RNA sequence: GGGAACGACUCGAGUAGAGUCGAAAAGGAGAGUCCCGCUCCUUCAGGUGAACGAUCUCGGUUGUUUCUCUGAAGGCAUGAUCACCCCGUCCGAUGCGGACGUUCGUGCUUCCGUCGAACGCGAAAGUAAAACCCUAAAGCUUCGGCUUUAGGGUAACAAGAUACCAAGUUUCGACUUGGUAUCUUGAAAAGAAACAACAACAACAAC
Reactivity to DMS in 0.01 (KOAc 150mM, MgCl2 10mM, bicine 150mM(pH8.5), 24C), signal-to-noise 3, nucleotides 027 to 156: g010g000a090g010a130g000u000c020c030c000g040c060u010c010c010u000u000c000a080g010g010u000g020a060a050c030g020a050u010c030u010c220g040g010u000u010g010u000u010u000c030u000c020u000g010a050a040g020g030c080a040u000g010a110u000c040a130c010c020c000c000g020u000c020c050g000a160u000g040c090g010g030a050c040g010u010u000c060g010u000g010c020u000u010c030c030g040u000c030g000a060a070c110g020c010g020a060a040a080g020u000a050a080a110a110c020c000c000u000a010a010a010g010c000u000u000c300g060g020c010u000u000u000a000g010g000g030u000a000a030
Reactivity to 2A3 in 0.01 (KOAc 150mM, MgCl2 10mM, bicine 150mM(pH8.5), 24C), signal-to-noise 4, nucleotides 027 to 156: g090g020a060g010a010g080u040c010c010c010g030c020u020c000c010u010u040c020a040g010g030u140g070a050a030c010g020a050u040c050u100c200g120g000u010u000g010u010u070u030c010u010c010u010g010a020a000g010g000c010a080u140g020a060u100c040a110c000c000c040c000g000u040c030c010g110a120u170g130c080g020g020a010c010g030u080u080c050g010u020g030c070u070u000c070c070g080u080c100g050a040a010c040g020c020g050a050a040a010g100u200a020a040a050a060c000c000c000u010a000a000a000g000c010u020u110c230g080g000c000u010u020u000a000g000g010g000u010a000a000